[RMDB]
Structure probing data (DMS and 2A3) for a 177-nucleotide construct. For DMS, 7,524 sequencing reads were counted. Conditions: 150 mM KOAc, 10 mM MgCl2 and 150 mM bicine (pH 8.5), 24 C.
RNA sequence: GGGAACGACUCGAGUAGAGUCGAAAAUCACAAAGCGGAUUUAGCUCGGUUGGGAGAGGUCCAGACCGAAUAUCUGGUGUUCCUGUGUCCGAGACACAGAAUUCGCACCAUAAACAACGGGAGAUUCACGGAUUAAUGGAUUCGUCCAUUAAUCCGUAAAAGAAACAACAACAACAAC
Reactivity to DMS in 0.01 (KOAc 150mM, MgCl2 10mM, bicine 150mM(pH8.5), 24C), signal-to-noise 4, nucleotides 027 to 126: u020c050a150c150a040a110a120g010c040g030g000a010u010u000u000a100g010c020u000c000g000g050u010u030g000g000g000a040g020a080g000g000u010c000c010a040g010a070c060c120g010a170a080u040a230u000c030u000g000g010u060g010u030u020c020c000u000g020u050g010u030c010c080g000a060g010a040c100a110c130a090g010a020a030u030u010c070g000c000a140c090c040a060u020a080a070a100c200a130a080c090g000g000g000a120g000a110u010u010c160
Reactivity to 2A3 in 0.01 (KOAc 150mM, MgCl2 10mM, bicine 150mM(pH8.5), 24C), signal-to-noise 6, nucleotides 027 to 126: u080c020a040c090a100a160a000g040c030g020g000a000u000u020u050a020g000c000u000c010g040g000u050u160g040g030g000a050g010a030g110g240u010c010c000a000g020a010c010c120g200a110a050u090a020u110c010u010g000g030u000g020u000u060c000c000u050g040u040g040u070c010c030g080a030g120a070c030a000c010a080g040a010a020u040u030c010g000c000a020c010c000a030u170a060a120a010c070a030a040c070g040g060g010a140g020a070u110u140c060
Values cover nucleotides 27 to 126. DMS adducts were read by reverse transcription with MarathonRT.